[RMDB]
RNA sequence: GGGAACGACUCGAGUAGAGUCGAAAAGCAAGAGCAAGAUUACCAACCCGGAGAGCGGAAAUACCCAACUCCAUUUUCAUUUGAGUGAAACGCCAGACUUAUCCGCCUCAACUUCGCUGUUGCCGUCGAUUUUGGGACUGUUCGCAGUCCCAAAAUCAAAAGAAACAACAACAACAAC
Reactivity to 2A3 in 0.01 (KOAc 150mM, MgCl2 10mM, bicine 150mM(pH8.5), 24C), signal-to-noise 6, nucleotides 027 to 126: g000c010a010a010g020a000g050c010a020a020g010a090u110u140a120c020c050a060a090c020c040c060g050g020a030g000a010g020c030g000g060a030a090a030u170a080c020c010c020a020a040c030u000c030c030a060u100u050u070u110c080a130u040u110u190g080a050g020u050g040a090a050a030c070g010c030c040a010g020a050c020u090u070a050u090c010c010g020c000c010u020c000a020a050c020u070u070c060g000c010u050g130u160u030g010c010c010g120u070c040
Reactivity to DMS in 0.01 (KOAc 150mM, MgCl2 10mM, bicine 150mM(pH8.5), 24C), signal-to-noise 6, nucleotides 027 to 126: g010c040a030a040g010a050g010c020a040a050g010a140u020u000a160c160c070a070a140c080c060c050g020g010a080g000a140g030c030g000g000a030a070a120u010a110c030c020c030a090a090c070u000c040c110a090u000u000u000u000c080a080u000u010u000g010a070g020u000g000a050a060a080c160g000c040c030a040g000a080c120u010u010a110u000c010c010g010c010c020u000c040a080a080c050u000u000c080g020c010u000g010u000u000g010c010c090g010u010c130